Source information:
Structure probing data (2A3 and DMS) for a 207-nucleotide construct. For DMS, 2,061 sequencing reads were counted. The data come from the RNA Mapping Database (RMDB), library OK3TST. The RNA was probed in 150 mM KOAc, 10 mM MgCl2 and 150 mM bicine (pH 8.5) at 24 C. For 2A3, 1,451 sequencing reads were counted.

RNA sequence: GGGAACGACUCGAGUAGAGUCGAAAAACGAAUAUACCUAUAUUAGUCACGAUGUCAAGGGGUAUAUUCAUACAGAAAUCAUAAUUGGCGUUAGCUGGGGACAAAGGCUGGCUCUAUAUGCGAAGACAUUUGACUGCUCUUUGAUAUACGUAAAGCGCUAAUCCAGCUCAUUCGUGAGCUGGAUUAGAAAAGAAACAACAACAACAAC
Reactivity to 2A3 in 0.01 (KOAc 150mM, MgCl2 10mM, bicine 150mM(pH8.5), 24C), signal-to-noise 3, nucleotides 027 to 156: a000c050g000a000a000u000a000u000a010c000c010u020a020u030a060u300u150a140g090u090c060a070c180g070a100u180g050u120c040a080a040g030g000g000g000u010a000u000a000u020u000c000a000u030a000c030a020g210a030a070a030u120c060a030u090a270a070u080u070g060g000c040g060u060u040a030g020c030u020g000g000g010g010a010c050a080a030a000g030g000c000u010g000g010c010u030c010u020a050u010a010u110g200c030g030a020a010g030a030c030a050u090u100u280g080a110c060u010g030c040u020c000u110u020u010g040a030u030a010u010a090c050g050u060a070a050a020g050c020g000
Reactivity to DMS in 0.01 (KOAc 150mM, MgCl2 10mM, bicine 150mM(pH8.5), 24C), signal-to-noise 1, nucleotides 027 to 156: a100c060g000a060a000u010a030u000a020c010c000u010a190u000a140u020u000a120g000u010c070a080c080g000a090u020g020u000c040a130a150g010g010g030g000u000a000u000a010u000u000c020a200u010a220c140a080g010a040a060a070u020c050a080u010a080a120u000u030g010g010c050g030u000u030a090g030c010u010g010g020g000g030a110c040a100a070a110g000g050c030u010g030g000c070u010c060u000a020u000a000u000g000c030g020a020a070g010a020c010a070u000u020u000g010a120c070u010g020c040u000c020u000u000u000g000a050u000a100u010a070c060g050u000a070a080a080g010c040g000